An RNA of 177 nucleotides, treated with 2A3 and DMS and read out base by base. Values are in units of 0.01, from 0 to 300, in steps of 10. It was measured as part of the RMDB library M2PK50. Reactivities are given for positions 27 through 126. For 2A3, 2,882 sequencing reads were counted.

[RMDB]
RNA sequence: GGGAACGACUCGAGUAGAGUCGAAAAUCCACGUCCUUCGGGACGUGGAAAAUACCGCACGGGAGCCGAAGAAAUCCCGAAGCGCAGUGCAGCGCAGCACAAAAAGGUGAGUCUUCGGACUCACCAACAGAUUCUAAGAGUUCGCUCUUAGAAUCUGAAAAGAAACAACAACAACAAC
Reactivity to 2A3 in 0.01 (KOAc 150mM, MgCl2 10mM, bicine 150mM(pH8.5), 24C), signal-to-noise 2, nucleotides 027 to 126: u000c000c000a000c010g000u020c010c010u060u080c180g090g000g000a010c010g000u010g010g000a000a000a000a000u030a010c000c020g000c020a030c010g000g000g030a020g110c080c040g110a160a060g060a060a170a020u020c000c000c000g000a160a030g020c020g040c080a050g040u090g100c060a090g050c070g000c060a020g020c040a020c020a060a140a020a000a020g020g010u000g000a000g000u000c010u010u070c100g020g010a000c000u000c000a000c000c010a000a000
Reactivity to DMS in 0.01 (KOAc 150mM, MgCl2 10mM, bicine 150mM(pH8.5), 24C), signal-to-noise 3, nucleotides 027 to 126: u000c000c010a000c000g020u000c000c000u010u010c200g040g010g040a010c010g030u010g010g000a000a010a030a090u010a110c070c030g020c090a230c030g010g010g000a050g020c100c080g010a080a060g010a090a100a090u000c020c000c000g010a130a110g030c040g020c090a100g000u000g010c100a100g000c090g000c040a140g000c050a040c130a080a040a050a100a070g000g010u000g010a000g000u000c000u000u000c080g000g010a010c000u000c000a000c010c010a020a030